[RMDB]
RNA sequence: GGGAACGACUCGAGUAGAGUCGAAAAGUCGUAGUAAGGGUCAUAGUCCCAGCCAUAUUCUCGUUCUUCACCACUGGCGCGAAUCGCGAUCUCAGCUUGCUGCUUGGCAAUGGCAUUGGGGUCCUCGGUUCAGCUGUCUUUUCGAAGACAGCUGAACAAAAGAAACAACAACAACAAC
Reactivity to 2A3 in 0.01 (KOAc 150mM, MgCl2 10mM, bicine 150mM(pH8.5), 24C), signal-to-noise 1, nucleotides 027 to 126: g040u040c020g030u060a020g000u040a060a130g070g020g020u050c040a050u060a090g060u030c000c000c010a000g030c000c020a090u070a110u100u050c050u020c040g090u140u000c020u120u070c020a040c030c000a000c010u060g000g000c000g000c010g100a050a020u050c020g010c020g020a040u000c020u000c040a050g000c000u010u100g000c000u050g040c070u140u110g050g000c020a030a070u160g030g000c020a040u030u120g010g030g020g000u030c040c020u040c000g040
Reactivity to DMS in 0.01 (KOAc 150mM, MgCl2 10mM, bicine 150mM(pH8.5), 24C), signal-to-noise 2, nucleotides 027 to 126: g030u000c070g040u000a050g000u020a070a090g020g010g020u000c060a090u010a090g010u000c010c020c010a110g000c090c020a050u000a050u000u010c010u000c050g000u000u000c020u000u020c050a060c050c040a110c100u010g000g000c050g000c070g000a050a070u000c090g040c300g000a060u000c040u010c050a110g010c050u000u000g010c040u000g000c150u000u000g010g010c090a040a050u000g020g010c030a080u010u010g010g000g000g010u000c020c060u000c060g010

Structure probing data (2A3 and DMS) for a 177-nucleotide construct. For DMS, 1,559 sequencing reads were counted. The RNA was probed in 150 mM KOAc, 10 mM MgCl2 and 150 mM bicine (pH 8.5) at 24 C. Values are in units of 0.01, from 0 to 300, in steps of 10. For 2A3, 1,242 sequencing reads were counted. 2A3 is a SHAPE reagent: it acylates the 2'-hydroxyl of flexible nucleotides of all four kinds.